[RMDB]
RNA sequence: GGGAACGACUCGAGUAGAGUCGAAAAUUUACGGUAUUCGUACCGUAAACGAGCAAGCAAGCAGCGCAACGAGACAAGACGAUAAUAAGAUCGAGCUUGCUGAUAGUAGGAUCUUCGGAUCCUACAAUAGGUUAAGUAGGUUCGCCUACUUAACCUAAAAAGAAACAACAACAACAAC
Reactivity to 2A3 in 0.01 (KOAc 150mM, MgCl2 10mM, bicine 150mM(pH8.5), 24C), signal-to-noise 3, nucleotides 027 to 126: u010u000u010a000c000g010g000u010a020u000u080c150g050u050a040c000c000g000u000a000a000a010c040g020a040g060c050a070a000g000c000a000a030g000c050a050g060c030g020c080a060a060c060g070a030g020a130c060a110a020g060a050c050g030a030u050a210a050u140a180a110g130a130u030c010g020a020g020c010u000u020g000c010u010g010a040u060a140g020u000a010g000g000a000u000c000u030u020c130g050g000a000u000c000c000u000a000c000a000a010
Reactivity to DMS in 0.01 (KOAc 150mM, MgCl2 10mM, bicine 150mM(pH8.5), 24C), signal-to-noise 4, nucleotides 027 to 126: u000u000u000a000c000g010g010u000a010u000u010c180g030u010a010c010c000g020u000a000a010a020c140g000a150g010c090a070a030g010c030a040a050g010c030a110g020c050g030c190a050a060c080g000a110g020a080c110a050a040g000a130c060g010a030u010a090a090u020a110a130g000a080u000c020g010a130g010c000u000u000g010c010u020g010a080u010a120g000u000a000g000g000a000u000c000u000u010c170g030g000a000u000c000c000u010a000c000a030a110
The record gives the reactivity of an RNA of 177 nucleotides to 2A3 and DMS. The data come from the RNA Mapping Database (RMDB), library M2PK50. For DMS, 5,157 sequencing reads were counted.